[RMDB]
RNA sequence: GGGAACGACUCGAGUAGAGUCGAAAACGAUGCUGUGACUUGCCAAAUGAUAUAUCGAACUUUUGUACUGUACAACACAGUACUUUCGAUGAUAUUAAAACAACGCAAUCCUUUCAAUGAUCCGUCAAAAAACAUUUCGGUUAUUUUUCGAAACCUGUAUGUGAAAGAAGUUCGCUUCUUUCACAUAAAAAGAAACAACAACAACAAC
Reactivity to DMS in 0.01 (KOAc 150mM, MgCl2 10mM, bicine 150mM(pH8.5), 24C), signal-to-noise 4, nucleotides 027 to 156: c070g020a140u000g020c030u000g020u020g000a130c070u000u010g000c030c050a080a110a180u020g020a070u000a030u000a060u000c000g020a040a060c300u000u000u000u000g050u000a000c000u010g000u000a120c180a130a190c230a080c010a010g020u010a000c000u000u000u000c000g010a080u000g010a060u000a030u000u000a050a070a150a080c060a050a080c110g000c060a070a080u000c030c040u020u000u000c050a070a100u000g010a060u000c040c010g000u010c010a000a020a070a120a070a070c050a090u000u000u010c060g010g010u000u000a090u000u010u000u010u000c020g000a040a070a080c060c050u000g020
Reactivity to 2A3 in 0.01 (KOAc 150mM, MgCl2 10mM, bicine 150mM(pH8.5), 24C), signal-to-noise 9, nucleotides 027 to 156: c030g040a040u080g010c060u050g060u080g050a080c060u030u050g010c020c010a040a090a160u110g020a010u010a000u000a000u030c000g010a040a080c070u140u180u130u190g000u000a000c010u000g010u040a090c030a230a010c030a130c000a070g000u000a000c000u000u010u000c010g000a010u050g080a010u010a000u010u080a060a100a040a050c060a040a020c050g000c030a020a060u040c010c020u050u160u130c070a090a110u100g020a040u050c010c020g070u060c080a060a090a050a050a070a100c040a080u090u130u080c020g000g030u040u060a110u080u130u050u050u080c030g020a030a030a040c000c010u040g020